[RMDB]
RNA sequence: GGGAACGACUCGAGUAGAGUCGAAAAUAAGAGCAUGUACGAAUCACGAUAUGAGAGUUCCUGGUGAAUCCCGGGUUCAAGGAAAGGUAUUAAUCUCCCACUGCGUUCCCUUGCAGUAGGGAUAUAAUGAAGUUAUUACAUUCGUGUAAUAACUUCAAAAAGAAACAACAACAACAAC
Reactivity to DMS in 0.01 (KOAc 150mM, MgCl2 10mM, bicine 150mM(pH8.5), 24C), signal-to-noise 9, nucleotides 027 to 126: u010a070a090g010a080g010c080a050u000g020u000a070c070g010a070a060u010c040a070c080g010a130u010a100u010g000a110g010a210g010u000u000c020c010u010g010g010u000g000a090a080u000c080c030c030g000g010g010u000u000c060a060a060g000g000a040a050a060g010g010u000a060u000u010a070a070u010c130u000c010c000c000a040c010u000g000c000g000u000u000c020c020c020u000u000g000c000a010g010u000a070g020g000g010a010u000a010u000a080a140
Reactivity to 2A3 in 0.01 (KOAc 150mM, MgCl2 10mM, bicine 150mM(pH8.5), 24C), signal-to-noise 4, nucleotides 027 to 126: u150a040a040g050a020g030c050a050u110g040u130a030c040g060a130a050u070c050a020c120g040a050u050a060u300g100a100g010a000g050u020u020c020c000u030g080g000u050g080a080a040u060c030c020c000g020g020g000u050u070c030a020a030g070g010a080a030a030g070g010u090a080u090u130a150a090u040c030u010c040c010c000a010c010u010g000c010g020u030u030c000c000c000u010u070g000c000a010g010u110a110g010g000g000a000u010a010u000a030a030
The record gives the reactivity of an RNA of 177 nucleotides to DMS and 2A3. As a SHAPE reagent, 2A3 marks flexible, mostly unpaired nucleotides at the ribose 2'-OH. Values cover nucleotides 27 to 126. The data come from the RNA Mapping Database (RMDB), library M2PK90. The RNA was probed in 150 mM KOAc, 10 mM MgCl2 and 150 mM bicine (pH 8.5) at 24 C. Reactivities are rounded to 0.1 and cut off at 0 and 3. DMS adducts were read by reverse transcription with MarathonRT. For 2A3, 6,180 sequencing reads were counted.